[RMDB]
RNA sequence: GGGAACGACUCGAGUAGAGUCGAAAACUGAUAUGAGAGAGCAGGACUUUCAACGGCAGCGCAUACACGAUGCUGAAUGACGUCGGCGGCAGCGACUUUUUCAGAAUGAGUUCAUCAUACCCAUUCACAUAGCAAAAUCAUUCGUGAUUUUGCUAUGAAAAGAAACAACAACAACAAC
Reactivity to 2A3 in 0.01 (KOAc 150mM, MgCl2 10mM, bicine 150mM(pH8.5), 24C), signal-to-noise 9, nucleotides 027 to 126: c020u040g040a040u070a110u230g070a080g010a010g000a010g030c030a030g020g060a090c020u060u120u040c100a070a040c030g020g000c000a010g010c010g000c030a020u070a120c070a010c080g050a040u060g000c020u030g060a110a110u100g030a020c030g020u020c010g020g020c010g010g000c010a010g010c010g040a060c000u060u070u020u050u060c060a030g030a070a050u060g010a030g030u060u060c030a070u020c000a010u130a120c010c010c000a010u070u050c040a030
Reactivity to DMS in 0.01 (KOAc 150mM, MgCl2 10mM, bicine 150mM(pH8.5), 24C), signal-to-noise 9, nucleotides 027 to 126: c040u000g000a100u020a060u010g010a090g000a080g010a100g010c030a080g010g010a130c060u000u010u010c080a070a160c070g010g010c020a040g010c050g010c060a080u020a100c190a080c060g000a050u010g010c030u000g000a060a060u010g000a070c170g000u010c030g000g030c040g000g020c040a030g010c040g010a070c060u000u010u010u000u000c050a060g010a050a030u000g000a060g010u010u010c150a070u010c130a090u010a100c010c000c000a060u010u010c080a210